[RMDB]
RNA sequence: GGGAACGACUCGAGUAGAGUCGAAAAGUGUUACCCCACGGGAACUGCUGAGUGCCCCUGACGUCCAGACCCUCCCCCGUCCGGGAGAAUGGAGAUUCGGGAACGUGAAGCAUGGUGGGGACGAAGCCUCUUUUGCUUAGUUCGCUAAGCAAAAGAGAAAAGAAACAACAACAACAAC
Reactivity to DMS in 0.01 (KOAc 150mM, MgCl2 10mM, bicine 150mM(pH8.5), 24C), signal-to-noise 4, nucleotides 027 to 126: g000u010g020u010u000a180c000c000c010c000a020c010g020g000g030a090a160c190u000g000c010u020g010a300g010u000g020c060c030c000c020u010g040a040c300g000u000c000c010a010g010a190c300c080c010u010c000c000c000c070c270g020u010c110c160g010g000g000a010g000a060a060u000g010g010a110g010a130u010u000c120g000g010g010a120a060c010g010u000g000a200a050g000c020a010u000g010g030u000g030g030g000g010a020c080g000a090a150g020c120
Reactivity to 2A3 in 0.01 (KOAc 150mM, MgCl2 10mM, bicine 150mM(pH8.5), 24C), signal-to-noise 1, nucleotides 027 to 126: g070u030g140u110u120a150c010c000c000c000a010c030g110g110g050a110a050c050u010g020c000u020g030a020g070u030g010c030c030c000c050u030g010a000c030g250u000c000c000a000g010a090c010c000c000u010c010c010c000c030c010g190u050c040c000g010g000g000a000g040a010a010u000g010g000a020g010a020u080u020c020g000g020g000a040a060c020g030u030g050a010a000g010c000a000u110g060g000u020g030g010g000g000a010c040g010a020a000g020c000